[RMDB]
The record gives the reactivity of an RNA of 177 nucleotides to DMS and 2A3. DMS adducts were read by reverse transcription with MarathonRT. 2A3 adducts were read by reverse transcription with SuperScript II with manganese.
RNA sequence: GGGAACGACUCGAGUAGAGUCGAAAAGUGAAGCACUGUGACACCACAGUGUAGAACUGUGACAGCACAGUGGGGCAAUGUGACACCACAGUGGAGCAUUGUGACAAAAAAGUAGAACAUUGUGGCAGACGCAUUUAGUGUUCGCACUAAAUGCGUCAAAAGAAACAACAACAACAAC
Reactivity to DMS in 0.01 (KOAc 150mM, MgCl2 10mM, bicine 150mM(pH8.5), 24C), signal-to-noise 2, nucleotides 027 to 126: g000u000g000a250a160g000c020a000c010u000g030u000g000a130c150a280c150c000a000c010a000g000u000g000u000a070g000a160a020c000u000g010u000g010a120c230a250g000c020a010c010a000g000u000g000g010g000g000c000a010a020u010g000u000g010a230c060a150c010c070a040c110a040g060u010g010g000a300g020c010a020u000u000g000u020g010a090c150a000a020a030a050a080a050g000u010a060g010a040a090c090a010u010u010g010u000g000g040c300a070
Reactivity to 2A3 in 0.01 (KOAc 150mM, MgCl2 10mM, bicine 150mM(pH8.5), 24C), signal-to-noise 2, nucleotides 027 to 126: g110u100g100a080a000g070c030a000c010u000g010u000g080a060c020a000c110c010a010c030a010g000u020g080u100a030g040a000a000c000u010g000u030g030a090c030a030g000c020a000c000a020g000u020g000g000g040g000c000a020a050u030g010u000g030a010c030a000c040c020a050c050a060g020u030g010g030a010g010c020a000u000u030g010u040g040a040c150a020a170a020a020a000a000g200u170a050g040a120a010c030a050u040u060g010u020g050g000c080a040
It was measured as part of the RMDB library OK2TRN. Values cover nucleotides 27 to 126.